RNA sequence: GGGAACGACUCGAGUAGAGUCGAAAAGAUGUAGACCGGGACCUGCUGCACGUCGAACAUCAGAUUGGCACCAGGGGCUUCAGGGUCGAUCAGAUAAAGCAGCUCGUGCGUGGGCUUGUCGAGCGCCAUGCUAAGAGCCAUUCGUGGCUCUUAGCAUAAAAGAAACAACAACAACAAC
Reactivity to DMS in 0.01 (KOAc 150mM, MgCl2 10mM, bicine 150mM(pH8.5), 24C), signal-to-noise 5, nucleotides 027 to 126: g010a090u000g030u010a160g010a030c020c030g010g000g010a170c020c010u000g020c250u000g010c020a030c150g000u000c030g000a110a180c260a090u000c180a100g000a040u000u000g010g000c010a040c100c030a030g000g010g000g010c060u000u010c070a080g020g000g010u000c010g000a070u010c040a070g010a090u000a060a140a130g020c060a080g020c020u000c060g010u010g010c100g000u000g010g010g010c040u000u000g010u010c030g000a050g020c080g000c050c110
Reactivity to 2A3 in 0.01 (KOAc 150mM, MgCl2 10mM, bicine 150mM(pH8.5), 24C), signal-to-noise 2, nucleotides 027 to 126: g030a040u080g010u110a030g030a020c010c020g040g030g010a050c000c000u040g000c040u020g020c030a010c070g030u010c030g060a140a070c030a230u170c020a050g030a070u080u090g040g010c030a040c060c010a030g010g060g020g110c030u190u170c140a110g010g000g150u010c030g010a050u080c030a000g050a090u120a100a100a030g060c030a020g000c040u030c030g030u080g060c050g020u120g010g090g000c000u040u070g040u060c000g010a000g050c040g000c030c010

Source information: An RNA of 177 nucleotides, treated with DMS and 2A3 and read out base by base. For DMS the reverse transcriptase was MarathonRT. It was measured as part of the RMDB library OK2TST. For 2A3, 2,574 sequencing reads were counted.